An RNA of 177 nucleotides, treated with 2A3 and read out base by base. For 2A3, 563 sequencing reads were counted. Reactivities are given for positions 27 through 126. Conditions: 150 mM KOAc, 10 mM MgCl2 and 150 mM bicine (pH 8.5), 24 C.
RNA sequence: GGGAACGACUCGAGUAGAGUCGAAAACGAGCAUCCGGAUGCCAAGGACUUCGGCAGCGCCGCCGCCCUGCCCGCCGAUCCGACCUGGUUUAAGCACGCCGUCUUCUACGAGGUGCUGGUCCGGGCGAGCAUGGACGCCUUUCGAGGCGUCCAUGCUAAAAGAAACAACAACAACAAC
Reactivity to 2A3 in 0.01 (KOAc 150mM, MgCl2 10mM, bicine 150mM(pH8.5), 24C), signal-to-noise 1, nucleotides 027 to 126: c030g030a010g020c030a060u070c040c020g030g010a040u040g050c020c040a100a080g080g080a090c020u080u010c070g090g000c040a030g030c060g000c020c040g040c000c000g000c030c000c030u070g030c030c000c000g030c030c000g000a040u080c010c040g060a140c080c000u010g030g020u080u190u170a060a000g000c000a000c070g220c020c030g010u040c080u210u000c070u220a000c020g040a040g000g020u010g090c050u030g000g030u050c010c000g010g010g010c010g000